[RMDB]
RNA sequence: GGGAACGACUCGAGUAGAGUCGAAAAACGAACCGAAGCGCCCAGAUGAUGGGCGCCGGCAAUGAAAACGGGCCCACAUCGCCGCGGAAGCUGGAAGUUCACGUCCACGGCGGCAGCGGCGACGAGCAUAUCCGAGAACUUGCGAGGCAGGGCGCGCUGUAGUACGUAAGUUCGCUUACGUACUACAAAAAGAAACAACAACAACAAC
Reactivity to 2A3 in 0.01 (KOAc 150mM, MgCl2 10mM, bicine 150mM(pH8.5), 24C), signal-to-noise 2, nucleotides 027 to 156: a000c020g010a090a000c020c000g020a160a030g000c010g050c000c000c000a030g040a120u180g020a040u010g020g020g030c010g010c000c000g000g000c030a010a190u150g090a130a060a020a040c040g000g030g000c010c020c000a040c000a050u000c000g010c010c000g010c030g070g060a030a000g000c020u000g000g060a010a050g050u200u260c090a060c100g050u040c010c010a040c110g080g000c000g030g000c060a010g020c020g000g040c000g000a040c040g030a010g000c040a050u070a060u190c080c020g050a050g040a200a050c080u120u080g020c040g030a030g000g030c050a030g070g030g000c050g000c010g000c050
Reactivity to DMS in 0.01 (KOAc 150mM, MgCl2 10mM, bicine 150mM(pH8.5), 24C), signal-to-noise 2, nucleotides 027 to 156: a120c040g020a130a140c020c010g000a150a100g020c020g000c000c000c020a120g010a090u010g010a220u000g000g000g040c000g040c010c000g020g020c050a090a100u000g020a090a080a050a130c010g020g010g000c000c000c040a190c040a100u000c020g020c020c000g040c000g030g000a020a210g030c050u040g020g010a140a150g000u000u010c130a120c070g050u000c000c020a060c000g020g000c030g030g010c040a060g020c010g020g020c030g030a060c040g000a060g000c000a120u000a100u010c050c010g020a290g040a070a070c000u000u000g010c040g000a140g030g050c080a110g020g030g000c000g040c010g050c060